[RMDB]
Chemical mapping of a 207-nucleotide RNA with 2A3 and DMS. DMS adducts were read by reverse transcription with MarathonRT.
RNA sequence: GGGAACGACUCGAGUAGAGUCGAAAAAGAAUGGACUAAUACAGUAGGUAUCUGUAGAUAAGUGCCUUUCCCUAAGAAUAUACAGACCACAGACAGAGACAAUACCCUAAUUAUGAACACAUUCGGAAUGAGUCUGCCGAGGGCAUUGCACUUUCUAAUUAUGCCGUAGUUUCGACUACGGCAUAAUAAAAGAAACAACAACAACAAC
Reactivity to 2A3 in 0.01 (KOAc 150mM, MgCl2 10mM, bicine 150mM(pH8.5), 24C), signal-to-noise 3, nucleotides 027 to 156: a000g170a010a030u140g000g020a000c000u060a020a050u080a050c020a000g030u070a080g160g170u120a090u110c020u010g020u000a040g050a140u160a140a040g040u140g160c010c000u000u020u030c000c000c010u040a090a060g040a150a030u100a000u060a090c030a030g030a000c010c030a010c020a090g100a100c020a050g080a010g020a100c030a040a100u070a160c020c000c000u050a130a100u170u180a210u260g110a080a010c050a020c030a160u120u130c040g000g040a090a090u060g000a040g040u000c030u040g050c030c020g030a060g000g010g000c020a020u000u090g030c030a020c010u010u050u080c020u120a010
Reactivity to DMS in 0.01 (KOAc 150mM, MgCl2 10mM, bicine 150mM(pH8.5), 24C), signal-to-noise 2, nucleotides 027 to 156: a080g020a060a040u010g000g000a120c020u000a170a090u020a030c030a080g040u010a110g010g010u010a010u010c020u000g020u010a040g010a180u010a090a150g080u000g020c050c020u000u000u000c010c010c000u020a050a140g020a100a060u000a090u000a090c010a130g020a110c020c050a180c020a100g020a120c050a100g020a160g010a080c030a050a120u020a050c020c000c020u000a050a100u010u000a090u000g000a120a140c060a120c070a160u000u010c050g000g010a080a090u030g010a090g020u000c070u010g000c040c090g010a080g010g020g010c080a060u000u000g040c000a180c100u070u000u000c030u000a070